An RNA of 177 nucleotides, treated with DMS and 2A3 and read out base by base. For DMS the reverse transcriptase was MarathonRT. Conditions: 150 mM KOAc, 10 mM MgCl2 and 150 mM bicine (pH 8.5), 24 C. For 2A3, 940 sequencing reads were counted. For 2A3 the reverse transcriptase was SuperScript II with manganese. The data come from the RNA Mapping Database (RMDB), library M2PK90.

RNA sequence: GGGAACGACUCGAGUAGAGUCGAAAAGUAAAGGCCGAACGAGCGCUAAUGCGCAUGCUAGAAAAUGGUAGGCCAUCGUAGUGUGAGCAUGAGCAGGAAAGAAACACACACAUGCACGUGCAAAAAACUUUGAUCCUAACUUCGGUUAGGAUCAAAGAAAAGAAACAACAACAACAAC
Reactivity to DMS in 0.01 (KOAc 150mM, MgCl2 10mM, bicine 150mM(pH8.5), 24C), signal-to-noise 1, nucleotides 027 to 126: g020u010a110a070a130g000g000c000c020g000a120a070c130g010a080g030c040g000c020u000a110a100u000g000c010g020c000a020u000g000c020u010a020g000a090a040a110a060u010g010g000u000a090g020g040c030c010a070u000c110g020u000a020g000u000g010u000g010a060g000c020a020u000g000a080g000c030a110g030g000a030a040a050g020a040a030a030c140a080c130a050c050a050c110a030u000g000c060a070c050g050u010g000c090a000a000a080a070a020a130
Reactivity to 2A3 in 0.01 (KOAc 150mM, MgCl2 10mM, bicine 150mM(pH8.5), 24C), signal-to-noise 1, nucleotides 027 to 126: g060u140a000a150a030g070g090c020c010g030a080a060c020g000a020g000c040g000c100u140a290a110u240g000c040g000c030a010u110g000c000u030a050g130a150a300a090a050u140g010g000u010a030g030g060c010c000a010u070c010g020u030a080g120u010g010u020g140a000g000c000a040u030g040a020g000c030a030g170g010a070a050a090g050a030a170a020c030a010c020a000c010a000c000a030u050g000c050a010c050g000u020g000c000a010a000a000a060a060a050